The record gives the reactivity of an RNA of 177 nucleotides to DMS and 2A3. The data come from the RNA Mapping Database (RMDB), library TTRDES. For 2A3 the reverse transcriptase was SuperScript II with manganese. For 2A3, 2,621 sequencing reads were counted.
RNA sequence: GGGAACGACUCGAGUAGAGUCGAAAAGAUAUGGAUACGAGGUGGACAUGUUCCGCAUCGGAAACGAUGCAGGAACAACAGCCACUCGUAUCCUAAGUCAAAAGUGAGACCGUUCGCGGUCUCACAAGGAUUGAAAGCAGUUCGCUGCUUUCAAUCCAAAAGAAACAACAACAACAAC
Reactivity to DMS in 0.01 (KOAc 150mM, MgCl2 10mM, bicine 150mM(pH8.5), 24C), signal-to-noise 1, nucleotides 027 to 126: g000a000u000a040u020g000g000a000u000a000c000g020a040g030g020u010g030g010a020c050a050u010g010u000u000c000c010g040c000a030u010c010g010g010a000a030a010c010g010a010u000g010c040a140g040g000a010a010c000a050a050c180a190g000c000c000a030c000u000c000g030u030a000u000c000c000u000a000a070g000u010c000a160a050a130a130g030u010g000a020g030a000c000c000g000u000u030c300g010c010g010g010u000c010u020c000a000c000a030a060
Reactivity to 2A3 in 0.01 (KOAc 150mM, MgCl2 10mM, bicine 150mM(pH8.5), 24C), signal-to-noise 1, nucleotides 027 to 126: g020a010u030a000u060g010g010a010u000a000c010g030a050g160g300u240g020g050a080c190a300u150g010u030u010c000c010g050c000a000u000c020g000g000a000a000a000c000g020a000u000g020c020a080g000g000a030a000c010a030a030c160a070g000c000c000a000c010u000c010g000u000a010u010c000c000u000a000a000g000u000c020a030a000a170a000g000u010g010a000g000a000c020c000g050u070u070c300g030c040g130g000u010c000u000c000a000c000a000a020